An RNA of 177 nucleotides, treated with DMS and 2A3 and read out base by base. The 2A3 profile rests on 11,136 reads.
RNA sequence: GGGAACGACUCGAGUAGAGUCGAAAACUAUAGUUUACCACCGUGUUGGUAAAUCAGUACGUGUCUCCACAGCUACGGGAUGGAUGUACUAUGUCAAGAGUAAAGCAGGUGAUUAUUCUGCCUACUCCCCAUACAAUAACUUCGGUUAUUGUAUGGGAAAAGAAACAACAACAACAAC
Reactivity to DMS in 0.01 (KOAc 150mM, MgCl2 10mM, bicine 150mM(pH8.5), 24C), signal-to-noise 8, nucleotides 027 to 126: c030u000a090u010a120g000u000u000u000a000c010c010a030c040c300g010u010g030u000u000g010g000u000a010a010a030u010c170a060g020u000a020c070g020u000g010u000c050u000c010c050a080c120a100g010c170u000a090c210g010g000g010a050u000g010g010a040u010g010u000a030c030u000a080u000g010u010c130a080a120g000a020g010u000a020a120a270g000c010a020g000g000u000g010a150u010u000a100u010u010c010u000g000c000c040u000a020c010u000c010
Reactivity to 2A3 in 0.01 (KOAc 150mM, MgCl2 10mM, bicine 150mM(pH8.5), 24C), signal-to-noise 8, nucleotides 027 to 126: c020u040a040u120a300g030u010u010u000a020c010c020a030c070c180g300u110g030u300u060g050g010u020a010a010a010u130c050a010g010u010a010c020g030u040g170u070c010u020c020c040a120c030a120g140c060u230a060c110g050g000g020a050u070g010g040a010u040g020u030a020c000u040a090u150g170u070c070a110a030g000a000g020u020a040a040a040g000c000a000g030g030u020g140a100u070u240a070u240u050c010u010g020c000c000u000a010c010u030c000
It was measured as part of the RMDB library OK2TRN. The RNA was probed in 150 mM KOAc, 10 mM MgCl2 and 150 mM bicine (pH 8.5) at 24 C.